[RMDB]
The record gives the reactivity of an RNA of 207 nucleotides to DMS.
RNA sequence: GGGAACGACUCGAGUAGAGUCGAAAAAUGUGGAGGCAUGGAGGUGACACAGGGGUGAGAGAUCGUGGUGCACUCACAUUGCACCAUGUGGCACAGCUGGAUGGGGAACCAGGCAAGACAGAGUCAUGCCAGACUUGUAGCAAGACACCCAGGAGGACCGUAAUGGAUCAUUCGUGAUCCAUUACGGAAAAGAAACAACAACAACAAC
Reactivity to DMS in 0.01 (KOAc 150mM, MgCl2 10mM, bicine 150mM(pH8.5), 24C), signal-to-noise 2, nucleotides 027 to 156: a170u020g000u010g050g000a060g010g110c110a090u000g020g030a060g000g010u000g080a150c060a100c060a050g000g000g000g020u000g020a140g020a080g000a000u000c030g100u000g000g000u020g000c010a060c020u010c300a080c200a270u020u020g010c000a070c000c020a040u010g020u010g040g030c090a110c020a100g020c050u000g010g010a060u000g040g020g000g010a090a120c010c040a070g010g000c030a120a050g000a180c020a170g000a000g010u010c010a060u020g010c000c040a120g000a030c070u010u010g040u000a060g040c020a040a060g000a080c040a050c050c000c030a210g000g010a070g040g000a300

Reactivities are rounded to 0.1 and cut off at 0 and 3.